[RMDB]
RNA sequence: GGGAACGACUCGAGUAGAGUCGAAAAGAUAUGGAAUUAUACAAAUGCGAAGUGACAUCGGAAACGAUGUACGAAGUAUAUUUGUAAUUCCUAAGUCAAAAUCCGAUAUUCUUCGGAAUAUCGGAAAGUUUCUAGUAACGUUCGCGUUACUAGAAACAAAAGAAACAACAACAACAAC
Reactivity to 2A3 in 0.01 (KOAc 150mM, MgCl2 10mM, bicine 150mM(pH8.5), 24C), signal-to-noise 3, nucleotides 027 to 126: g010a000u030a030u080g000g020a010a010u060u040a080u050a230c100a040a020a010u060g140c050g040a170a020g060u090g260a060c000a000u000c010g000g020a030a030a020c010g000a000u000g000u000a000c000g010a040a010g100u090a050u030a090u300u020u000g010u010a000a000u000u000c000c010u010a110a010g050u040c020a030a030a000a300u000c000c010g000a000u000a000u000u020c020u030u050c170g090g000a010a000u010a000u000c000g010g000a050a010a000
Reactivity to DMS in 0.01 (KOAc 150mM, MgCl2 10mM, bicine 150mM(pH8.5), 24C), signal-to-noise 3, nucleotides 027 to 126: g010a030u000a300u010g010g000a030a010u010u000a060u000a080c090a010a050a030u000g010c040g000a190a300g010u000g020a000c000a000u010c010g010g000a110a050a120c000g010a000u000g020u000a010c010g000a130a200g010u010a010u000a070u000u000u000g000u000a000a010u000u000c000c010u010a020a100g000u000c010a070a100a090a150u000c000c000g000a010u000a000u000u000c000u000u000c230g000g010a010a000u000a000u000c000g010g000a000a010a030
Source information
This 177-nucleotide RNA was probed chemically with 2A3 and DMS. It was measured as part of the RMDB library TTRDEL. The 2A3 profile rests on 5,163 reads.